[RMDB]
RNA sequence: GGGAACGACUCGAGUAGAGUCGAAAACAGGAAUGGCGGGACCCCACUUCAGCAGGGUCCGCGUUCCAUCCUUUCUUACCUGAUGGCCGGCAUGGUCCCAGCCUCCUCGCUGGCGCCGGCUGGGCAAAACCUAGAGACUUCGGUCUCUAGAAAAGAAACAACAACAACAAC
Reactivity to 2A3 in 0.01 (KOAc 150mM, MgCl2 10mM, bicine 150mM(pH8.5), 24C), signal-to-noise 9, nucleotides 027 to 129: c060a010g020g090a040a040u100g300g240c090g040g050g050a080c000c010c020c000a060c080u290u250c110a090g050c040a050g010g000g000u020c000c010g020c000g000u020u010c000c000a020u030c010c000u050u100u030c040u050u120a120c020c030u100g100a170u190g180g030c000c010g010g000c020a080u170g050g040u100c000c030c020a000g010c000c020u090c020c020u100c100g000c000u000g010g010c020g000c000c010g010g000c010u000g000g000g020c000a040a050a020a020c000
Reactivity to DMS in 0.01 (KOAc 150mM, MgCl2 10mM, bicine 150mM(pH8.5), 24C), signal-to-noise 9, nucleotides 027 to 129: c270a060g000g040a060a010u030g070g080c040g000g000g000a030c000c000c000c000a110c150u070u080c190a050g020c210a120g010g020g020u000c010c020g050c000g010u000u000c050c010a060u000c020c020u020u060u030c020u030u070a120c070c000u060g040a080u080g040g050c030c020g000g040c020a060u000g020g030u000c300c010c010a020g000c010c140u020c120c030u060c180g000c000u000g010g000c190g000c000c000g020g030c000u010g000g050g010c070a060a050a120a140c120
Description:
This 170-nucleotide RNA was probed chemically with 2A3 and DMS. Reactivities are given for positions 27 through 129. DMS adducts were read by reverse transcription with MarathonRT.